[RMDB]
Overview
Structure probing data (2A3 and DMS) for a 177-nucleotide construct. For 2A3 the reverse transcriptase was SuperScript II with manganese. The data come from the RNA Mapping Database (RMDB), library OK2TST. For 2A3, 1,307 sequencing reads were counted. Values cover nucleotides 27 to 126.
RNA sequence: GGGAACGACUCGAGUAGAGUCGAAAACAGAGGGUGGGAGCCCCAUCCCAGGUGUGGCAGACUGAGCACAUCUGCCUGGAUUGCCCCACACCAAGUCACUCACAGUGUGGAGGUUCCAUGUCUGGAGAUCACCGAGGAUGUUCGCAUCCUCGGUGAUAAAAGAAACAACAACAACAAC
Reactivity to 2A3 in 0.01 (KOAc 150mM, MgCl2 10mM, bicine 150mM(pH8.5), 24C), signal-to-noise 1, nucleotides 027 to 126: c030a000g060a040g060g000g020u080g000g080g010a090g050c040c060c000c000a020u000c000c000c000a000g000g030u060g010u020g010g050c020a010g040a160c080u120g080a080g090c000a010c010a140u050c040u030g000c000c000u020g010g020a010u090u280g030c000c000c000c000a000c000a000c010c000a110a080g080u080c100a020c100u120c000a050c020a040g030u020g000u030g050g050a220g060g010u060u030c010c010a010u040g030u060c010u030g000g040a080g030
Reactivity to DMS in 0.01 (KOAc 150mM, MgCl2 10mM, bicine 150mM(pH8.5), 24C), signal-to-noise 2, nucleotides 027 to 126: c050a140g010a130g010g000g000u020g010g000g000a300g000c070c090c020c040a060u000c000c030c000a060g000g040u010g020u000g010g030c030a040g000a100c120u010g000a080g010c010a060c050a110u000c040u010g010c020c040u000g000g000a060u010u000g010c030c040c020c010a000c010a030c010c080a080a150g010u000c120a160c120u020c120a060c140a170g000u010g000u000g020g030a130g020g020u020u000c000c000a040u000g000u000c020u000g000g000a070g020